[RMDB]
RNA sequence: GGGAACGACUCGAGUAGAGUCGAAAAACAGUCAGUACGCUGACUGAGGGAAACGGGAGCCGGGCUUGGGACAAGAGCCAUCCCAAGUCCAAGGCCAAGUAGGCUCUAGUGAUGGUAUGCCAUCACAAAAACUGGUCUACCUUCGGGUAGACCAGAAGCUGUGAGAUAUGUUCGCAUAUCUCACAGCAAAAGAAACAACAACAACAAC
Reactivity to 2A3 in 0.01 (KOAc 150mM, MgCl2 10mM, bicine 150mM(pH8.5), 24C), signal-to-noise 2, nucleotides 027 to 156: a000c000a000g020u010c000a000g010u040a050c230g020c140u000g000a010c000u010g020a110g020g050g030a100a120a190c080g070g030g000a050g030c010c010g000g020g000c010u000u010g020g000g000a000c020a080a060g010a010g020c020c000a010u000c000c000c000a000a000g000u000c020c000a030a030g000g000c070c010a050a020g060u140a110g020g030c000u040c010u030a050g000u000g000a010u020g000g030u160a040u290g150c000c000a000u000c000a000c000a000a060a000a000a000c010u000g000g020u000c000u000a000c000c000u020u080c160g010g000g000u010a000g000a000c010c000a000g000a000a010